The record gives the reactivity of an RNA of 177 nucleotides to 2A3 and DMS.
RNA sequence: GGGAACGACUCGAGUAGAGUCGAAAAUUUAAGAGCGUAGAUGUCACUGUCACGAUACGAGUAAGUGACUCUCGUGUACUACUGACGAAUGAGACAGAGACAUUUAUGCUCAGUGUCAGUCAAGGAACGUAUAGAUACGGUUCGCCGUAUCUAUACGAAAAGAAACAACAACAACAAC
Reactivity to 2A3 in 0.01 (KOAc 150mM, MgCl2 10mM, bicine 150mM(pH8.5), 24C), signal-to-noise 9, nucleotides 027 to 126: u140u150u100a190a050g000a000g000c010g000u000a000g000a020u010g010u010c000a000c050u010g010u020c000a010c110g040a020u040a080c020g000a010g020u040a170a120g040u070g230a070c010u010c020u010c040g100u100g030u030a030c030u010a010c010u050g160a090c040g070a110a100u140g030a060g000a060c000a000g020a000g000a010c000a010u000u020u010a010u010g000c000u000c010a000g000u010g030u030c040a030g030u030c050a050a070g090g020a140a050
Reactivity to DMS in 0.01 (KOAc 150mM, MgCl2 10mM, bicine 150mM(pH8.5), 24C), signal-to-noise 9, nucleotides 027 to 126: u010u010u010a100a120g000a020g010c010g030u000a000g010a010u000g010u000c010a130c010u000g000u000c010a100c070g010a090u000a070c040g010a100g010u010a030a070g010u000g000a080c050u000c150u010c150g000u010g010u010a030c040u000a050c040u000g010a120c070g000a100a070u010g010a090g010a020c000a020g000a070g010a020c020a010u000u000u000a010u000g010c000u000c000a040g020u000g000u010c060a060g000u000c100a080a090g000g010a090a150
DMS (dimethyl sulfate) methylates the pairing face of unpaired adenines and cytosines. Conditions: 150 mM KOAc, 10 mM MgCl2 and 150 mM bicine (pH 8.5), 24 C. For 2A3 the reverse transcriptase was SuperScript II with manganese.